[RMDB]
RNA sequence: GGGAACGACUCGAGUAGAGUCGAAAAGCAGGACCUGGCACCCCUCCUCUUCAGCAGGAGGGAUGUGGCCACCAGUCAUGAGCCAAUGAUGGGCUGCACUCUGCUCCACGCCCUCCGGGACGUGGGGGUAUCCUGGAAGUUUCGACUUCCAGGAUACAAAAGAAACAACAACAACAAC
Reactivity to DMS in 0.01 (KOAc 150mM, MgCl2 10mM, bicine 150mM(pH8.5), 24C), signal-to-noise 6, nucleotides 027 to 126: g000c020a040g010g010a100c070c070u000g010g010c020a040c020c000c000c000u010c000c010u000c030u010u010c300a140g020c180a010g000g010a010g010g000g000a000u000g030u010g010g010c010c010a070c060c110a110g010u000c080a100u000g010a140g010c080c110a080a080u000g010a060u010g000g000g010c010u000g010c030a090c110u010c040u010g000c010u000c000c010a020c010g000c000c000c000u010c210c170g010g020g000a020c000g020u010g000g010g010g000
Reactivity to 2A3 in 0.01 (KOAc 150mM, MgCl2 10mM, bicine 150mM(pH8.5), 24C), signal-to-noise 5, nucleotides 027 to 126: g020c020a010g040g040a210c010c030u050g000g000c000a020c010c000c010c000u010c000c010u010c030u300u230c110a140g030c040a010g040g010a010g000g000g000a010u120g030u020g120g090c000c010a020c010c000a010g060u040c030a030u090g090a040g180c070c040a100a040u090g030a050u060g060g020g000c010u030g020c010a030c020u080c040u080g050c000u000c010c000a000c010g000c000c000c020u040c100c170g080g000g020a080c010g000u020g000g010g010g000